[RMDB]
RNA sequence: GGGAACGACUCGAGUAGAGUCGAAAACCUCUAGUAUUCGUACUAGAGGCACAUGCCGCCCCAACGGCUUCCUGACCGGGCGGAUUCACUUUAAAUGGAGCAAAGCCGCUGUGUUCGCACAGCGGAAUAGAUACUCGGUAUUCGUACCGAGUAUCUAAAAAGAAACAACAACAACAAC
Reactivity to DMS in 0.01 (KOAc 150mM, MgCl2 10mM, bicine 150mM(pH8.5), 24C), signal-to-noise 3, nucleotides 027 to 126: c000c000u010c000u000a020g000u000a010u000u020c150g030u000a000c000u000a000g010a010g000g000c080a010c120a090u000g020c000c000g000c000c020c020c080a100a270c070g000g000c010u010u000c010c000u000g010a090c260c300g000g020g030c090g000g000a050u000u010c070a050c160u000u000u010a070a080a130u010g000g010a040g000c070a110a080a160g020c000c000g010c000u000g030u000g000u000u020c150g010c010a010c000a000g000c000g000g000a020a000
Reactivity to 2A3 in 0.01 (KOAc 150mM, MgCl2 10mM, bicine 150mM(pH8.5), 24C), signal-to-noise 2, nucleotides 027 to 126: c000c010u000c000u000a010g010u000a020u040u060c230g020u020a000c000u000a000g000a000g000g020c030a010c000a100u140g010c000c000g000c000c000c000c000a050a060c070g070g000c000u090u080c000c010u020g060a060c010c020g000g000g010c020g030g000a030u140u150c060a080c070u090u210u260a080a150a100u240g030g000a010g040c030a040a040a030g050c000c010g000c020u010g020u000g020u040u070c200g040c090a000c010a000g020c020g000g000a010a000
Conditions: 150 mM KOAc, 10 mM MgCl2 and 150 mM bicine (pH 8.5), 24 C. Chemical mapping of a 177-nucleotide RNA with DMS and 2A3. Values cover nucleotides 27 to 126. The data come from the RNA Mapping Database (RMDB), library M2PK50.